[RMDB]
RNA sequence: GGGAACGACUCGAGUAGAGUCGAAAAGAUAUGGAGUGGUGAGCGAUAAGCGUAUAUCGGAAACGAUAUGACGCUUUUGACGCUCUAACACUCCUAAGUCAAAGUAUAGCGGUUCGCCGCUAUACAAGUCAAGUGUUCAGUUCGCUGAACACUUGACAAAAGAAACAACAACAACAAC
Reactivity to DMS in 0.01 (KOAc 150mM, MgCl2 10mM, bicine 150mM(pH8.5), 24C), signal-to-noise 2, nucleotides 027 to 126: g000a010u000a130u020g000g010a010g010u000g000g010u000g000a010g000c000g010a150u010a010a000g010c000g020u010a040u000a010u000c010g000g000a030a020a070c010g000a010u010a010u010g030a050c000g010c000u000u000u000u000g040a160c130g020c010u000c000u000a160a120c010a020c000u010c000c000u010a000a070g010u010c010a120a170a200g000u020a010u000a000g010c000g000g030u000u030c300g020c010c010g020c030u000a000u000a000c000a100a090
Reactivity to 2A3 in 0.01 (KOAc 150mM, MgCl2 10mM, bicine 150mM(pH8.5), 24C), signal-to-noise 2, nucleotides 027 to 126: g000a010u040a000u050g010g000a010g000u000g030g030u050g010a000g020c030g070a190u130a300a000g000c010g040u040a000u000a010u000c010g000g060a020a020a010c020g000a010u000a010u080g260a080c020g000c000u000u010u010u040g070a030c020g000c000u000c000u010a200a000c010a000c000u020c000c000u010a020a000g010u000c030a190a000a020g000u000a000u000a030g020c030g000g130u050u080c300g070c090c010g040c000u000a000u000a000c000a020a040